[RMDB]
RNA sequence: GGGAACGACUCGAGUAGAGUCGAAAACGUCCCCGUCGUACAGAAUGGUAACAUAUCUCUCCAAAUAUCUGAGCUUGGGUAUACGGGGAAACCCAACCCCUUGGGAAGAUUGGGUAUAUGGCAAAAUUACAUCGAUUGUACUUCGGUACAAUCGAAACGUAGUAAGAAGCUUCGGCUUCUUACUACGAAAAGAAACAACAACAACAAC
Reactivity to 2A3 in 0.01 (KOAc 150mM, MgCl2 10mM, bicine 150mM(pH8.5), 24C), signal-to-noise 4, nucleotides 027 to 156: c020g120u050c010c000c010c010g150u100c010g010u100a080c050a080g140a160a160u130g050g070u120a160a020c010a010u070a060u030c090u010c030u040c110c020a080a110a110u200a070u030c010u030g020a020g090c010u030u010g020g000g010u020a020u000a040c010g010g000g000g000a020a040a040c000c000c000a010a020c010c000c000c000u010u020g030g010g010a020a030g000a030u050u060g020g000g010u040a020u000a000u040g050g010c040a010a060a050a100u170u100a050c020a130u010c000g010a000u000u000g000u000a000c000u010u040c160g080g000u000a000c000a000a000u000c000g000a000a000a000
Reactivity to DMS in 0.01 (KOAc 150mM, MgCl2 10mM, bicine 150mM(pH8.5), 24C), signal-to-noise 1, nucleotides 027 to 156: c040g010u010c010c000c000c080g000u000c080g040u010a130c040a090g010a210a110u000g010g000u000a040a130c090a100u000a040u000c040u000c010u010c030c010a060a140a180u000a130u000c040u000g010a300g010c070u000u000g030g030g050u000a150u010a140c080g020g010g030g020a030a110a180c120c010c000a020a100c130c000c010c080u000u010g010g010g000a250a050g000a050u010u000g000g000g000u000a030u000a020u000g000g000c080a060a060a040a080u010u010a080c060a150u000c000g030a000u000u000g000u000a000c000u010u000c250g040g020u000a000c000a000a000u010c000g000a010a030a040
Structure probing data (2A3 and DMS) for a 207-nucleotide construct.
DMS adducts were read by reverse transcription with MarathonRT.
For DMS, 2,193 sequencing reads were counted.
The reactions ran in a buffer of 150 mM KOAc, 10 mM MgCl2 and 150 mM bicine (pH 8.5), at 24 C.